[RMDB]
RNA sequence: GGGAACGACUCGAGUAGAGUCGAAAACAAUUCCUAUGCCUGCAUCAGUAAUCGGUUUAGUAUUAUUAUUUGUAUUAUUAUGUACUGGUGCUGUUAAGUUAGGCGAAGUCGAAAAAGUAGGAACGACCAUACGCGUAAGCUUCGGCUUACGCGUAUGAAAAGAAACAACAACAACAAC
Reactivity to DMS in 0.01 (KOAc 150mM, MgCl2 10mM, bicine 150mM(pH8.5), 24C), signal-to-noise 2, nucleotides 027 to 126: c300a110a300u000u000c000c000u000a050u020g000c020c010u000g020c000a060u020c000a020g020u000a040a020u010c060g010g000u000u010u000a010g010u000a000u000u010a050u030u140a180u020u080u110g000u010a010u010u010a010u000u010a030u030g010u000a010c000u020g000g000u010g000c000u000g000u020u000a060a110g030u010u010a020g000g000c030g010a090a100g000u030c070g010a060a060a110a040a050g040u010a020g000g000a100a090c090g020a080c090
Reactivity to 2A3 in 0.01 (KOAc 150mM, MgCl2 10mM, bicine 150mM(pH8.5), 24C), signal-to-noise 3, nucleotides 027 to 126: c060a090a120u040u000c010c000u030a070u220g010c000c000u010g000c030a100u000c020a010g010u050a200a050u020c020g030g010u030u050u020a030g010u000a000u110u010a020u080u060a160u160u240u140g010u010a040u100u000a020u030u040a100u180g150u030a020c000u000g020g020u000g040c010u000g020u030u100a210a140g040u040u150a000g010g000c010g030a030a000g020u030c020g100a030a000a020a060a080g170u130a110g030g030a150a030c000g020a020c020
An RNA of 177 nucleotides, treated with DMS and 2A3 and read out base by base. Values are in units of 0.01, from 0 to 300, in steps of 10. DMS adducts were read by reverse transcription with MarathonRT. The RNA was probed in 150 mM KOAc, 10 mM MgCl2 and 150 mM bicine (pH 8.5) at 24 C. The DMS profile rests on 3,410 reads.